Structure probing data (DMS and 2A3) for a 207-nucleotide construct. High 2A3 reactivity points to a flexible backbone, as in loops and unpaired stretches. The RNA was probed in 150 mM KOAc, 10 mM MgCl2 and 150 mM bicine (pH 8.5) at 24 C. Source: RMDB library OK3TST, as collected in RNAgym.

[RMDB]
RNA sequence: GGGAACGACUCGAGUAGAGUCGAAAAACAGUCCCCUGCUUCCUCUAAUAUGCCUGGAGGUAUACUGUAAGGCUGUAGGAAUAAGAACCACAGGCACCUGGGACUGUGAGAGUGGGCAAAUAAUUCUUAGGAGUUACAGGCCUUAGACCUUCACCAAAAUGACGUAGGUAUUCGUACCUACGUCAUUAAAAGAAACAACAACAACAAC
Reactivity to DMS in 0.01 (KOAc 150mM, MgCl2 10mM, bicine 150mM(pH8.5), 24C), signal-to-noise 3, nucleotides 027 to 156: a020c030a040g020u010c010c010c010c060u000g020c070u000u000c010c020u000c080u010a070a150u000a060u000g020c040c010u000g040g010a150g000g030u000a070u000a080c040u000g020u000a070a070g030g030c030u000g020u020a140g020g020a120a140u000a120a210g010a140a170c010c030a050c040a060g000g030c030a030c130c060u020g020g010g010a070c010u000g010u010g010a070g020a080g000u000g020g010g020c040a060a120a130u000a050a040u000u000c010u000u000a200g030g010a130g010u000u000a020c060a270g010g010c010c000u010u010a090g040a070c020c010u010u010c050a140c010c040a040a080
Reactivity to 2A3 in 0.01 (KOAc 150mM, MgCl2 10mM, bicine 150mM(pH8.5), 24C), signal-to-noise 3, nucleotides 027 to 156: a010c010a000g010u020c000c000c030c000u040g020c050u060u050c010c010u000c030u100a120a120u100a160u300g090c050c060u060g040g030a070g030g030u040a070u040a040c050u070g060u160a050a050g050g000c030u030g050u100a100g040g020a110a060u190a170a090g050a060a030c020c000a000c010a050g120g000c030a090c050c030u020g010g000g000a000c010u000g010u020g020a040g000a010g040u120g000g020g000c020a010a040a140u090a040a030u080u020c020u020u090a090g000g070a040g020u050u030a040c040a020g040g120c020c000u010u030a030g040a020c030c000u060u100c050a040c110c080a060a300